The record gives the reactivity of an RNA of 170 nucleotides to DMS and 2A3. 2A3 is a SHAPE reagent: it acylates the 2'-hydroxyl of flexible nucleotides of all four kinds. The RNA was probed in 150 mM KOAc, 10 mM MgCl2 and 150 mM bicine (pH 8.5) at 24 C.

RNA sequence: GGGAACGACUCGAGUAGAGUCGAAAAAAGCCGCCCCCGGGCGCUCCCCUCGAUCCACCUUCGAGGGGGUUCACACCUCCAACCUGCGGGCCGGCUACUCUUCUUUUCCUUUCCUCGUCAUCCUGGGUACGUUUGUCGUUCGCGACAAACAAAAGAAACAACAACAACAAC
Reactivity to DMS in 0.01 (KOAc 150mM, MgCl2 10mM, bicine 150mM(pH8.5), 24C), signal-to-noise 2, nucleotides 027 to 129: a000a020g030c010c010g000c020c010c000c000c010g000g020g050c090g050c140u040c020c000c000c050u010c000g000a030u030c000c020a000c090c060u000u030c000g020a050g000g060g010g000g040u000u000c010a000c110a220c020c010u000c060c030a090a130c070c040u040g050c280g040g000g040c140c040g000g040c000u000a020c060u100c060u060u000c060u070u030u020u010c000c040u010u040u020c000c000u010c070g050u020c060a080u050c040c010u020g000g000g000u000a060c100
Reactivity to 2A3 in 0.01 (KOAc 150mM, MgCl2 10mM, bicine 150mM(pH8.5), 24C), signal-to-noise 3, nucleotides 027 to 129: a000a000g000c010c000g010c000c000c000c020c010g010g010g000c010g030c050u090c010c000c010c000u000c000g020a030u040c050c070a080c040c060u030u010c000g000a000g000g000g020g000g000u110u090c020a040c010a050c070c030u100c060c010a050a090c010c000u020g000c050g020g030g000c100c020g000g000c000u020a040c020u010c000u080u060c000u030u050u010u070c010c000u020u030u030c000c000u030c020g020u030c010a020u020c010c000u030g020g020g030u100a070c090